[RMDB]
RNA sequence: GGGAACGACUCGAGUAGAGUCGAAAAGAUAUGGAAUGCGACAUGCUCGAUUGGGUCGGAAACGACCUAGAGAGCAACAGCGGUAUUCCUAAGUCAAAACUAAAACAUCGUUCGCGAUGUUUUAGAAGACGGUCUAAAACUUCGGUUUUAGACCGUCAAAAGAAACAACAACAACAAC
Reactivity to 2A3 in 0.01 (KOAc 150mM, MgCl2 10mM, bicine 150mM(pH8.5), 24C), signal-to-noise 1, nucleotides 027 to 126: g020a050u080a030u180g000g000a050a010u030g000c030g050a010c100a080u070g000c050u000c000g070a110u030u300g000g030g000u000c000g090g030a050a060a060c020g000a000c000c000u000a000g000a010g010a000g100c020a000a020c020a030g300c110g040g030u050a000u000u040c000c030u000a150a030g080u110c070a010a000a160a220c000u020a000a000a000a000c000a010u010c020g040u080u060c260g010c020g100a000u000g000u000u000u000u000a010g030a010a010
Reactivity to DMS in 0.01 (KOAc 150mM, MgCl2 10mM, bicine 150mM(pH8.5), 24C), signal-to-noise 2, nucleotides 027 to 126: g000a060u010a300u010g000g010a020a010u000g010c020g020a040c060a240u000g010c000u000c000g010a300u000u010g010g010g040u020c000g030g010a130a170a180c000g020a000c010c010u000a000g000a300g000a010g010c000a000a050c260a120g000c020g010g020u000a040u000u000c000c000u030a100a150g000u000c050a050a050a130a140c000u000a000a010a020a020c000a000u000c000g000u020u030c300g000c010g000a010u000g000u000u000u000u000a000g000a120a110
The record gives the reactivity of an RNA of 177 nucleotides to 2A3 and DMS.
Conditions: 150 mM KOAc, 10 mM MgCl2 and 150 mM bicine (pH 8.5), 24 C.
For DMS, 978 sequencing reads were counted.
High DMS reactivity at an A or C suggests that its Watson-Crick edge is free.